[RMDB]
Description:
An RNA of 207 nucleotides, treated with 2A3 and read out base by base. Reactivities are rounded to 0.1 and cut off at 0 and 3. For 2A3, 847 sequencing reads were counted.
RNA sequence: GGGAACGACUCGAGUAGAGUCGAAAACGCUCCAGCUUACGCUAAAGCUGCGUGAGUUAAUCUCCUUUUGGAGCUGGACUGAUUAGAAUUUCUAGCGUUUUAAUCGCUCCAUAACCUUAAGCUAGACGCUUUUAAAAGGUGGUUCGCCUUUUAAACUCAUUGAAGCACUGUUCGCAGUGCUUCAAUGAAAAGAAACAACAACAACAAC
Reactivity to 2A3 in 0.01 (KOAc 150mM, MgCl2 10mM, bicine 150mM(pH8.5), 24C), signal-to-noise 1, nucleotides 027 to 156: c040g000c000u000c000c000a000g030c000u000u010a000c010g000c030u110a180a080a260g170c200u070g000c020g000u000g010a000g000u020u030a030a060u030c090u090c000c030u060u130u130u050g000g000a010g000c010u020g000g000a000c000u010g000a000u010u000a020g010a050a010u060u060u010c000u000a000g000c000g000u000u000u000u000a000a000u010c010g010c060u040c010c000a110u140a130a060c020c070u140u120a030a000g000c000u000a010g030a010c030g130c000u050u090u070u050a000a040a000a000g030g010u070g090g300u100u290c120g010c000c000u010u030u000u010a010a030a020c000u010
The reactions ran in a buffer of 150 mM KOAc, 10 mM MgCl2 and 150 mM bicine (pH 8.5), at 24 C.